[RMDB]
RNA sequence: GGGAACGACUCGAGUAGAGUCGAAAAUUGCGACGACAUAAAAAUCGCACAAGGAUUGGAAAGGGUAACUCAUUUAAGCCGUGACAUGUGAUACCUGCCUGCCUUGUUAUGUGACGGCCAAGGGUGAGUCAUUUAAAUUAUUCGUAAUUUAAAUGACAAAAGAAACAACAACAACAAC
Reactivity to DMS in 0.01 (KOAc 150mM, MgCl2 10mM, bicine 150mM(pH8.5), 24C), signal-to-noise 9, nucleotides 027 to 126: u040u020g000c010g010a050c080g010a080c100a120u040a030a040a040a110a120u010c020g020c060a070c130a060a070g000g010a120u010u000g000g010a070a090a080g000g010g000u020a070a060c040u010c020a030u010u010u020a170a180g000c020c020g000u000g010a030c070a030u020g020u020g010a080u010a030c030c010u000g010c020c010u010g010c040c040u010u000g010u010u030a030u010g000u000g000a030c020g010g000c010c060a050a070g000g000g000u000g000a100
Reactivity to 2A3 in 0.01 (KOAc 150mM, MgCl2 10mM, bicine 150mM(pH8.5), 24C), signal-to-noise 9, nucleotides 027 to 126: u090u080g020c020g010a020c010g020a010c040a070u300a080a080a010a010a010u040c020g040c020a010c010a030a050g090g040a160u100u140g050g040a160a140a120g090g000g020u070a060a040c010u010c060a090u050u090u120a070a020g020c020c030g030u040g040a030c020a050u090g040u060g050a030u060a100c010c000u030g030c010c010u040g010c000c010u020u010g020u030u030a050u080g040u020g040a010c020g010g010c010c030a080a110g060g000g010u060g030a020
Notes:
The record gives the reactivity of an RNA of 177 nucleotides to DMS and 2A3. For 2A3, 21,433 sequencing reads were counted. For 2A3 the reverse transcriptase was SuperScript II with manganese. Values cover nucleotides 27 to 126.